[RMDB]
Source: RMDB library OK2TRN, as collected in RNAgym. Structure probing data (2A3 and DMS) for a 177-nucleotide construct. DMS adducts were read by reverse transcription with MarathonRT.

RNA sequence: GGGAACGACUCGAGUAGAGUCGAAAAUCAGCCAUCACGGCUGCCAGCGCUGCUCAGCGGAGAGGACGCAUAGGAAGAAACCCAUCACAAGUUGGUGAUGAGUAUUGCUAUGGAGGGCACACAAAUGCGCACUAGGAGUAUUCGUACUCCUAGUGCGAAAAGAAACAACAACAACAAC
Reactivity to 2A3 in 0.01 (KOAc 150mM, MgCl2 10mM, bicine 150mM(pH8.5), 24C), signal-to-noise 3, nucleotides 027 to 126: u070c010a020g020c010c010a070u230c080a070c170g030g010c030u000g040c020c010a080g040c080g010c050u110g000c010u050c090a020g000c060g030g020a100g010a020g030g040a040c050g030c080a010u010a000g060g040a030a030g070a120a130a020c040c000c000a020u060c010a000c010a050a230g300u240u170g180g000u130g000a010u040g010a010g010u060a070u060u090g020c030u030a000u040g040g010a040g020g040g030c040a020c000a000c010a030a130a050u220g070
Reactivity to DMS in 0.01 (KOAc 150mM, MgCl2 10mM, bicine 150mM(pH8.5), 24C), signal-to-noise 3, nucleotides 027 to 126: u020c050a070g030c010c010a110u000c230a140c240g000g010c020u000g030c090c030a120g000c030g040c060u000g010c040u000c040a120g000c080g020g000a060g000a090g000g010a110c140g020c010a060u000a040g030g030a070a050g010a120a090a050c000c020c010a020u000c010a000c000a120a160g060u010u000g030g000u000g010a000u030g020a020g000u010a120u000u000g000c030u000a030u000g010g000a150g020g000g000c020a060c110a070c100a050a070a100u000g010
High DMS reactivity at an A or C suggests that its Watson-Crick edge is free. The reactions ran in a buffer of 150 mM KOAc, 10 mM MgCl2 and 150 mM bicine (pH 8.5), at 24 C.